[RMDB]
Notes: This 177-nucleotide RNA was probed chemically with 2A3 and DMS. Values are in units of 0.01, from 0 to 300, in steps of 10. DMS adducts were read by reverse transcription with MarathonRT. The DMS profile rests on 1,790 reads. It was measured as part of the RMDB library RFMREP.

RNA sequence: GGGAACGACUCGAGUAGAGUCGAAAAGAAACGUUUCGACGUUUCGGUGGCUUGUUUUAAGUUGCCUGCGAUCUCUUAAUGACUCAGGCAGCUAAAGCAAGUCUGUAUGCAAGGUCUUCGGACCUUGGGAUAGCAAGAACUUCGGUUCUUGCUAUCCAAAAGAAACAACAACAACAAC
Reactivity to 2A3 in 0.01 (KOAc 150mM, MgCl2 10mM, bicine 150mM(pH8.5), 24C), signal-to-noise 2, nucleotides 027 to 126: g010a020a020a000c000g000u000u010u170c140g070a020c020g000u000u000u010c000g060g030u080g000g000c010u010u010g030u030u060u000u010a140a060g020u000u000g000c020c000u010g000c030g180a300u020c030u000c000u090u300a230a100u300g010a000c020u000c010a000g000g000c000a000g000c000u000a010a000a010g000c000a000a000g000u000c010u030g050u020a090u150g080c030a010a000g030g000u000c010u040u110c240g070g030a020c020c000u000u010g060
Reactivity to DMS in 0.01 (KOAc 150mM, MgCl2 10mM, bicine 150mM(pH8.5), 24C), signal-to-noise 1, nucleotides 027 to 126: g010a010a000a000c000g000u000u000u020c200g010a060c000g000u000u000u010c010g010g020u010g020g000c000u000u000g000u000u000u000u000a040a060g020u010u010g000c010c010u010g030c140g000a170u010c020u020c300u010u010a140a110u000g000a030c030u020c010a020g010g010c030a010g010c000u000a000a000a020g000c010a010a020g000u010c000u000g010u000a070u000g020c000a020a010g010g010u000c000u000u000c150g020g000a000c000c000u000u000g000